[RMDB]
RNA sequence: GGGAACGACUCGAGUAGAGUCGAAAAUAAGGCUAGCCGUUGCAGCAGUCGGUCAAUGGGCUGUGUGGUGAAAGCCACCGCAACGUCAUCUUACAUUGACUGGUUUCCAGCCGGGUUACUUGGCAGGAAAUAAGACUUAAGGUAACUGGUUUCCAAACGAGGAUUCUUAGUUCGCUAAGAAUCCUCGAAAAGAAACAACAACAACAAC
Reactivity to 2A3 in 0.01 (KOAc 150mM, MgCl2 10mM, bicine 150mM(pH8.5), 24C), signal-to-noise 1, nucleotides 027 to 156: u200a020a040g090g000c070u060a020g050c010c020g010u060u050g000c040a060g010c010a000g010u010c000g040g010u020c030a030a010u000g040g010g000c000u010g030u010g010u040g060g030u030g090a210a080a060g040c020c000a000c010c050g000c010a010a060c030g120u120c030a130u070c080u160u210a050c010a030u010u000g000a020c000u030g040g000u000u020u020c000c020a020g000c020c000g000g000g000u000u010a000c000u020u010g020g080c030a030g000g040a000a000a030u060a000a060g030a050c080u190u070a010a020g000g000u000a010a000c040u080g090g000u000u010u000c030c000a080a110a030